RNA sequence: GGGAACGACUCGAGUAGAGUCGAAAAGAUAUGGAACUGAACUACAGCAUAUCUUCUCGAUGAAAGACCAGUUAAUCGGAAACGAUUAACUGGUCUGGAGAGAAGUAAGUGCUGCAGUUCCUAAGUCCUGAAUAAAAUAGUUCGCUAUUUUAUUCAGAAAAGAAACAACAACAACAAC
Reactivity to DMS in 0.01 (KOAc 150mM, MgCl2 10mM, bicine 150mM(pH8.5), 24C), signal-to-noise 5, nucleotides 027 to 126: g010a110u000a250u010g020g010a020a020c000u000g010a120a080c100u030a300c020a010g010c000a010u010a300u000c000u000u010c000u000c000g010a140u010g020a210a120a020g000a010c000c000a000g010u000u000a000a010u000c000g010g000a160a090a240c000g000a000u000u000a000a000c000u000g000g000u000c000u000g000g000a060g000a010g010a010a010g000u010a050a190g010u000g000c000u000g000c010a000g010u000u000c010c030u000a070a090g000u000c050
Reactivity to 2A3 in 0.01 (KOAc 150mM, MgCl2 10mM, bicine 150mM(pH8.5), 24C), signal-to-noise 1, nucleotides 027 to 126: g020a040u110a060u200g020g010a020a020c020u020g030a170a050c180u180a070c300a020g000c010a000u010a140u160c000u090u030c040u000c000g300a300u080g030a130a080a040g000a000c000c000a000g020u000u000a010a000u010c010g060g000a190a050a010c030g000a000u000u000a010a010c000u000g000g000u000c020u010g000g000a000g010a020g020a050a000g010u110a300a070g030u000g030c010u020g000c000a000g000u000u000c010c000u000a060a010g030u020c000